[RMDB]
RNA sequence: GGGAACGACUCGAGUAGAGUCGAAAAUUAAACCAAUAGCUUGCAUCGGUUUAAAUGGCGAGACCGUCAAAUUGCGGGAAAAGGGUCAACAGCCGUUCAGUACCAAGUCUCGAGGGAAACUUUGAGAUGGCCUUGCAAAGGAUAUGGUAAUAAGCUGGUUAUAGUUGUGCUUCGGCACAACUAUAACAAAAGAAACAACAACAACAAC
Reactivity to 2A3 in 0.01 (KOAc 150mM, MgCl2 10mM, bicine 150mM(pH8.5), 24C), signal-to-noise 2, nucleotides 027 to 156: u040u030a040a050a060c010c010a030a100u110a030g070c070u040u080g050c060a050u090c080g050g000u040u160u100a030a110a060u050g010g000c000g010a050g020a070c040c000g040u040c030a080a100a300u080u150g040c070g060g000g000a020a110a030a090g090g020g010u010c020a050a020c020a070g010c020c010g030u030u010c010a000g020u020a040c000c040a000a060g020u000c000u000c020g020a010g000g010g030a060a050a070c010u010u020u040g010a020g010a010u050g040g000c020c000u010u140g080c030a050a080a010g030g010a030u060a080u240g000g010u010a040a030u100a110a010g030c040u040g030
Reactivity to DMS in 0.01 (KOAc 150mM, MgCl2 10mM, bicine 150mM(pH8.5), 24C), signal-to-noise 1, nucleotides 027 to 156: u000u000a070a100a300c030c010a040a110u000a200g010c120u000u030g010c050a180u020c040g000g040u000u010u000a000a000a100u010g010g000c000g000a130g030a100c030c030g060u030c050a020a080a250u000u000g040c020g050g000g000a090a140a120a110g000g000g000u000c010a050a300c090a300g010c040c010g000u000u000c010a090g010u000a070c000c050a070a220g040u000c030u000c040g000a050g020g090g050a230a020a170c040u000u000u000g000a070g000a080u000g070g200c040c010u000u030g010c040a020a140a200g040g040a200u000a100u000g030g040u000a050a080u030a050a130g000c030u000g000